[RMDB]
RNA sequence: GGGAACGACUCGAGUAGAGUCGAAAAAUCAUGGGCCAGGCCUCGGUGGGGAGCUCCGACAGCGCCGCCUCCAGGAUGAUGUCAGCGUUGGGGUUGGCGCUGGAUGAGUGCGUGCGCAAACAGCGCCGGUGGUUGCUGCAUUCGUGCAGCAACCACCAAAAGAAACAACAACAACAAC
Reactivity to 2A3 in 0.01 (KOAc 150mM, MgCl2 10mM, bicine 150mM(pH8.5), 24C), signal-to-noise 1, nucleotides 027 to 126: a000u090c020a120u080g030g000g000c030c000a030g040g000c000c000u030c070g000g000u070g030g000g020g020a050g000c010u030c050c050g010a000c050a010g000c000g010c000c000g000c000c000u100c000c000a030g130g040a130u200g070a100u100g180u240c190a100g030c130g080u000u070g040g000g000g000u020u260g010g000c000g000c020u000g000g000a010u000g000a000g030u090g000c040g000u200g030c030g000c000a160a130a110c120a070g000c000g000c010c070